[RMDB]
RNA sequence: GGGAACGACUCGAGUAGAGUCGAAAAUCCUAAGUCAGAGGGAACCGUAGGGUUGAGCAAAUGCUAAUACUAUAUCGGAAACGAUAUAGGAUAACAUUUGCAAUGAUGCCCUACUCAGUACCUCUGAUAUGGAAAAAUCCUCGUUUCGACGAGGAAACAUAAUAGCGGGGUUCGCCCCGCUAUUAUGAAAAGAAACAACAACAACAAC
Reactivity to 2A3 in 0.01 (KOAc 150mM, MgCl2 10mM, bicine 150mM(pH8.5), 24C), signal-to-noise 2, nucleotides 027 to 156: u030c010c010u010a130a020g010u000c000a000g000a020g000g000g020a020a000c010c000g000u000a000g000g010g020u040u050g020a010g000c000a000a000a000u000g000c010u040a040a010u090a280c000u000a000u000a000u000c000g010g070a120a040a050c010g000a000u000a000u000a010g000g000a010u010a020a020c000a000u000u000u020g000c010a000a040u020g000a010u060g000c000c010c000u000a000c000u000c000a010g010u000a000c000c000u000c000u000g000a000u000a000u010g000g050a050a000a000a050a040u050c000c020u010c010g000u030u040u140c230g110a050c000g000a010g000g000a010a010a000
Reactivity to DMS in 0.01 (KOAc 150mM, MgCl2 10mM, bicine 150mM(pH8.5), 24C), signal-to-noise 2, nucleotides 027 to 156: u000c010c020u000a070a210g010u000c010a000g020a010g020g000g030a180a110c300c300g020u010a020g000g030g000u000u020g010a090g060c000a030a020a010u000g000c020u000a090a150u000a090c000u000a020u000a000u010c010g020g000a280a130a300c000g010a000u000a000u000a000g000g000a030u000a040a030c000a000u000u000u000g020c020a010a050u000g000a020u000g010c000c000c000u000a010c050u010c020a030g040u010a180c020c000u010c020u000g010a010u010a110u020g000g010a010a070a040a150a130u000c000c000u000c000g060u000u000u000c300g040a040c000g030a020g030g000a000a040a200
This 207-nucleotide RNA was probed chemically with 2A3 and DMS.